RNA sequence: GGGAACGACUCGAGUAGAGUCGAAAAUCGUACUUACCUCUCACUCUGUGGCUACCUUGACGGCGCCCACAAUUGUGAAUCAAGAGAGGUAUGUUAAAAUUACUGGGUUGUACCCAACCAUUACGGUCACGGACCACGUUCGCGUGGUCCAAAAGAAACAACAACAACAAC
Reactivity to DMS in 0.01 (KOAc 150mM, MgCl2 10mM, bicine 150mM(pH8.5), 24C), signal-to-noise 2, nucleotides 027 to 129: u040c090g000u030a030c020u020u000a010c010c000u040c000u020c020a070c040u000c050u000g040u000g040g110c000u010a100c000c020u000u000g040a090c110g000g000c280g050c300c020c000a000c020a010a150u000u000g010u030g010a170a040u000c090a090a110g050a020g030a080g030g000u010a020u000g000u000u000a070a090a060a030u000u000a060c070u040g020g030g050u010u010g020u110a000c030c060c000a090a060c000c000a100u000u100a000c100g010g030u010c110a000c020
Reactivity to 2A3 in 0.01 (KOAc 150mM, MgCl2 10mM, bicine 150mM(pH8.5), 24C), signal-to-noise 5, nucleotides 027 to 129: u050c000g020u010a030c000u000u010a000c000c010u000c000u000c000a030c000u000c000u020g000u000g010g010c030u050a070c010c000u060u160g150a120c100g030g030c050g010c020c090c000a000c000a000a170u110u080g050u060g090a100a050u140c110a130a030g010a010g000a000g050g010u000a000u000g000u000u030a060a030a020a030u090u070a040c050u010g010g010g000u000u070g020u280a300c000c000c030a020a010c000c000a050u120u130a060c110g030g000u010c040a030c080